The record gives the reactivity of an RNA of 207 nucleotides to DMS and 2A3. 2A3 adducts were read by reverse transcription with SuperScript II with manganese. For DMS, 4,874 sequencing reads were counted. The reactions ran in a buffer of 150 mM KOAc, 10 mM MgCl2 and 150 mM bicine (pH 8.5), at 24 C. For 2A3, 2,185 sequencing reads were counted.
RNA sequence: GGGAACGACUCGAGUAGAGUCGAAAAAUUCUUGGUCAAUUGCUUUUUAAGACCUGGCUGAUGAAGUGCCGGCAUGACAAAGCCGCCUCGCAAGCCUUCCAAGCCGUUGCUCGGUGAAGCCGAGGCGCCGCUCCGCAGCCGGCCGCGUAAGAAGCGGCAAUCCGUUAUAGUUCGCUAUAACGGAUUGAAAAGAAACAACAACAACAAC
Reactivity to DMS in 0.01 (KOAc 150mM, MgCl2 10mM, bicine 150mM(pH8.5), 24C), signal-to-noise 2, nucleotides 027 to 156: a120u020u010c030u010u010g000g020u000c050a120a140u010u010g010c010u000u000u020u000u020a060a230g020a070c060c030u010g030g020c010u000g010a170u010g010a090a090g000u000g020c030c010g020g000c000a100u010g050a120c060a090a040a110g010c040c040g000c010c010u000c020g000c040a050a100g010c060c000u000u010c030c040a060a090g030c010c170g020u000u000g010c020u010c100g020g030u000g030a030a080g030c050c210g010a050g020g030c020g000c070c140g010c020u000c020c030g000c020a270g010c020c050g020g010c000c000g010c000g000u000a030a080g010a150a090g030c010g010g020
Reactivity to 2A3 in 0.01 (KOAc 150mM, MgCl2 10mM, bicine 150mM(pH8.5), 24C), signal-to-noise 3, nucleotides 027 to 156: a000u110u040c010u040u070g040g000u030c020a090a180u120u130g040c050u230u150u110u130u200a110a060g010a020c000c020u020g090g010c010u010g010a110u060g060a160a050g020u030g080c040c010g040g000c120a190u110g040a200c060a080a050a000g010c000c010g000c000c010u010c000g040c100a110a050g010c000c000u010u070c040c000a040a020g010c010c020g220u200u300g050c060u090c110g050g000u150g080a070a020g010c050c010g010a000g000g000c010g000c010c060g010c010u060c070c040g020c010a000g000c000c000g000g000c010c010g000c000g010u020a050a020g030a040a000g000c000g000g000